The record gives the reactivity of an RNA of 177 nucleotides to DMS and 2A3. DMS adducts were read by reverse transcription with MarathonRT. The reactions ran in a buffer of 150 mM KOAc, 10 mM MgCl2 and 150 mM bicine (pH 8.5), at 24 C. Reactivities are rounded to 0.1 and cut off at 0 and 3. For DMS, 2,194 sequencing reads were counted. Values cover nucleotides 27 to 126. Source: RMDB library OK2TRN, as collected in RNAgym.

[RMDB]
RNA sequence: GGGAACGACUCGAGUAGAGUCGAAAAACACCAGGUAGAUACUUGCAGAAGGAUUCCAGUGACGGAUCCACAACACCUCUUCUGCAAGCUCGGUGUAACCCACCGCGGUAAGUAGGAUCCACAACACCCUACGAACCUAAUUCGUUAGGUUCGUAGGAAAAGAAACAACAACAACAAC
Reactivity to DMS in 0.01 (KOAc 150mM, MgCl2 10mM, bicine 150mM(pH8.5), 24C), signal-to-noise 3, nucleotides 027 to 126: a030c010a040c010c020a120g010g010u000a090g010a170u010a170c030u000u000g000c000a000g010a030a010g000g000a140u000u030c110c130a090g000u010g020a130c160g010g000a030u010c010c030a060c050a080a080c150a060c090c010u000c000u000u000c010u000g000c010a000a010g000c030u010c130g000g030u000g000u000a050a100c060c030c000a130c220c150g030c100g020g020u000a040a160g010u000a120g000g000a040u000c030c020a080c120a040a010c120a070c180
Reactivity to 2A3 in 0.01 (KOAc 150mM, MgCl2 10mM, bicine 150mM(pH8.5), 24C), signal-to-noise 4, nucleotides 027 to 126: a000c010a000c000c010a000g070g070u150a090g100a200u190a210c010u010u010g000c000a010g020a010a010g050g010a080u190u070c100c050a100g080u050g180a020c080g030g010a020u000c020c010a030c030a070a070c020a030c020c020u070c010u040u000c010u000g000c000a020a000g030c010u030c090g000g000u000g010u030a050a060c030c010c010a020c030c110g080c070g060g010u040a130a010g010u040a100g000g030a010u020c000c000a010c010a000a060c020a040c010